Source: RMDB library OK2TRN, as collected in RNAgym. The record gives the reactivity of an RNA of 177 nucleotides to DMS and 2A3. The reactions ran in a buffer of 150 mM KOAc, 10 mM MgCl2 and 150 mM bicine (pH 8.5), at 24 C.
RNA sequence: GGGAACGACUCGAGUAGAGUCGAAAAUGUCAUGCUGGCCAUCCUCGCGUUGAUCAGCCUGGUAUGCACCUAUCGGUUGCCCGAAACCGCCGGAUCGGCCCUCGUCAGCCGCUAGUUGGCGUGCAGGCGAUUCCACUAGGUUCGCCUAGUGGAAUCGAAAAGAAACAACAACAACAAC
Reactivity to DMS in 0.01 (KOAc 150mM, MgCl2 10mM, bicine 150mM(pH8.5), 24C), signal-to-noise 4, nucleotides 027 to 126: u010g000u010c030a040u010g010c050u000g010g020c050c030a080u000c010c030u020c230g050c130g000u000u000g010a050u000c060a050g000c020c050u000g020g000u000a020u000g000c120a120c070c010u000a040u010c070g000g020u010u000g000c080c090c030g010a060a070a080c090c070g010c090c050g000g000a070u010c040g000g000c020c070c030u010c080g010u010c060a040g000c000c040g000c070u010a060g020u000u000g000g020c040g030u000g000c030a060g000g010
Reactivity to 2A3 in 0.01 (KOAc 150mM, MgCl2 10mM, bicine 150mM(pH8.5), 24C), signal-to-noise 2, nucleotides 027 to 126: u060g020u020c020a010u020g000c000u060g030g060c020c020a030u040c000c030u020c100g070c110g010u050u070g050a060u050c020a000g010c020c000u000g030g020u050a030u040g040c040a070c020c020u040a070u060c040g030g030u040u070g040c040c000c010g050a080a020a000c040c010g000c020c040g120g050a150u150c060g020g030c030c020c000u030c020g060u030c010a020g010c000c020g000c040u050a030g080u060u140g070g010c030g030u050g010c050a000g020g040